[RMDB]
RNA sequence: GGGAACGACUCGAGUAGAGUCGAAAAACCUUUGUGAGUUAGACAUGCUCAAGAUGAGGAGGAGGCUCGUCCCAUUGGGACGAGCUACCCACCCUCUUGAGAGCAACAGCUAACUCACUCUGGUAAAGCCCGACGAAUGUUCGCAUUCGUCGGGCAAGUUACAUGAAGCGUUCGCGCUUCAUGUAACAAAAGAAACAACAACAACAAC
Reactivity to 2A3 in 0.01 (KOAc 150mM, MgCl2 10mM, bicine 150mM(pH8.5), 24C), signal-to-noise 1, nucleotides 027 to 156: a000c030c000u030u000u000g000u010g010a000g010u000u000a020g010a110c060a260u060g000c010u000c020a020a030g020a100u190g030a120g070g000a050g020g000a020g020g000c000u010c010g010u020c000c010c110a220u230u300g010g000g000a000c080g010a020g030c000u010a010c000c000c010a110c020c010c000u010c000u000u020g070a040g000a010g000c010a040a090c030a060g040c000u000a000a000c000u000c000a000c000u000c000u010g020g000u030a180a060a000g000c020c010c020g000a000c000g020a000a000u010g010u120u170c230g000c100a010u000u000c000g010u010c000g000g000g000c000a000a000
Chemical mapping of a 207-nucleotide RNA with 2A3. The 2A3 profile rests on 1,237 reads. For 2A3 the reverse transcriptase was SuperScript II with manganese. Values cover nucleotides 27 to 156.